This 170-nucleotide RNA was probed chemically with 2A3 and DMS. Conditions: 150 mM KOAc, 10 mM MgCl2 and 150 mM bicine (pH 8.5), 24 C. For 2A3, 30,461 sequencing reads were counted. Values are in units of 0.01, from 0 to 300, in steps of 10.

[RMDB]
RNA sequence: GGGAACGACUCGAGUAGAGUCGAAAACCGAGCCCGAGCAUGGGCCCCAGUUCCGAACGAAGAGACCGCCGGGGAAGGGGGGCGAACCGACGGGAGUUCAAUGGUAAAGAGGCGAAGAACCUCGGAGAAACCUACUUGUUCGCAAGUAGGAAAAGAAACAACAACAACAAC
Reactivity to 2A3 in 0.01 (KOAc 150mM, MgCl2 10mM, bicine 150mM(pH8.5), 24C), signal-to-noise 8, nucleotides 027 to 129: c010c010g000a030g030c000c010c010g040a050g100c110a130u220g000g000g000c000c010c000c010a050g030u100u080c020c020g020a020a020c020g020a050a040g040a020g020a060c010c020g040c010c020g020g000g000g020a010a050g030g020g000g000g000g000c020g000a020a020c020c010g040a040c030g020g010g000a020g000u030u060c050a050a040u080g010g000u040a050a050a040g020a020g020g020c060g020a020a000g010a060a070c010c010u010c020g010g000a040g020a020a050a000
Reactivity to DMS in 0.01 (KOAc 150mM, MgCl2 10mM, bicine 150mM(pH8.5), 24C), signal-to-noise 8, nucleotides 027 to 129: c040c020g000a100g000c090c000c030g000a120g050c190a110u060g000g040g000c010c040c040c050a090g030u020u010c000c050g010a060a070c130g020a050a070g020a070g030a030c080c040g000c080c070g040g030g020g060a070a060g000g000g000g010g000g010c030g030a080a050c050c050g010a020c000g000g000g000a090g020u030u000c050a080a040u000g000g000u000a010a090a100g010a050g000g000c080g010a060a060g030a080a110c040c000u040c010g020g040a080g000a090a080a100